[RMDB]
RNA sequence: GGGAACGACUCGAGUAGAGUCGAAAAACUUGCUGAUUUUAAGCUUCUUGCUUAGGACCAGGAUUGGGAGCCACACAAUUGGGAGGUUCCAGUGAAUGCAGGCAACAGAGGAUGAAGCAGGGCCAAAAGGUGGAUACCUGGCAAUAAUAUCUUCCUACUAAUAUGCAGGGUUCGCCCUGCAUAUUAGAAAAGAAACAACAACAACAAC
Reactivity to DMS in 0.01 (KOAc 150mM, MgCl2 10mM, bicine 150mM(pH8.5), 24C), signal-to-noise 1, nucleotides 027 to 156: a100c060u010u010g000c030u030g020a070u000u000u000u000a020a090g020c020u000u010c190u000u000g040c010u000u010a060g030g000a020c040c010a030g030g000a100u000u010g030g000g000a090g060c020c010a070c090a160c040a090a160u000u000g030g000g000a130g000g010u000u010c010c000a120g000u010g000a070a080u000g000c000a070g010g020c050a070a110c060a110g010a110g010g000a040u000g000a160a150g040c020a100g000g000g020c020c070a140a040a070a020g000g070u000g020g010a180u000a020c020c020u000g000g010c050a050a050u000a010a120u000a100u000c020u000u000c000c000u000a210
Reactivity to 2A3 in 0.01 (KOAc 150mM, MgCl2 10mM, bicine 150mM(pH8.5), 24C), signal-to-noise 2, nucleotides 027 to 156: a010c050u070u100g000c030u080g120a170u000u050u060u070a100a060g010c010u130u060c070u230u260g010c000u030u010a020g000g050a050c000c010a000g020g060a120u050u080g070g010g010a000g050c030c010a050c020a000c010a060a300u090u090g050g050g020a050g040g020u050u000c010c010a010g030u050g060a080a000u020g000c020a010g020g000c030a070a030c020a060g010a010g080g020a040u050g030a050a010g000c010a030g010g000g000c000c000a070a190a000a000g030g020u040g000g040a010u060a140c000c020u020g000g070c050a000a090u050a070a020u080a070u070c030u020u070c030c030u050a130